[RMDB]
Conditions: 150 mM KOAc, 10 mM MgCl2 and 150 mM bicine (pH 8.5), 24 C. An RNA of 207 nucleotides, treated with 2A3 and read out base by base. Source: RMDB library OK3TST, as collected in RNAgym. 2A3 adducts were read by reverse transcription with SuperScript II with manganese. Values cover nucleotides 27 to 156.
RNA sequence: GGGAACGACUCGAGUAGAGUCGAAAACGCCAGGGGUACCGCUCGUGGAGAAAGCACAAAAACUGCAUCCUAUCGUGCCUCCUCCAGUGCGGCGGAGACGUUUCAUUCACCCGUAGAUACUUGCUUUUCAACAAAGGAGUGGCCGUCCCACGUAACGCCACAGUGGAUGGUUCGCCAUCCACUGUGGAAAAGAAACAACAACAACAAC
Reactivity to 2A3 in 0.01 (KOAc 150mM, MgCl2 10mM, bicine 150mM(pH8.5), 24C), signal-to-noise 2, nucleotides 027 to 156: c030g000c010c020a020g090g010g010g030u090a080c010c010g000c010u030c060g180u040g000g030a040g020a040a050a010g000c020a020c040a010a260a070a080a040c170u300g020c080a120u230c050c110u300a110u180c080g000u000g040c010c000u060c010c000u000c020c000a030g050u020g090c010g030g000c020g050g000a030g000a020c050g010u090u030u080c090a070u080u060c040a170c020c030c020g020u060a010g040a090u080a090c000u040u030g300c000u160u100u020u180c080a090a080c060a190a090a060g070g030a050g030u070g010g000c030c000g020u020c000c010c000a030c020g030u050a080a020c050g000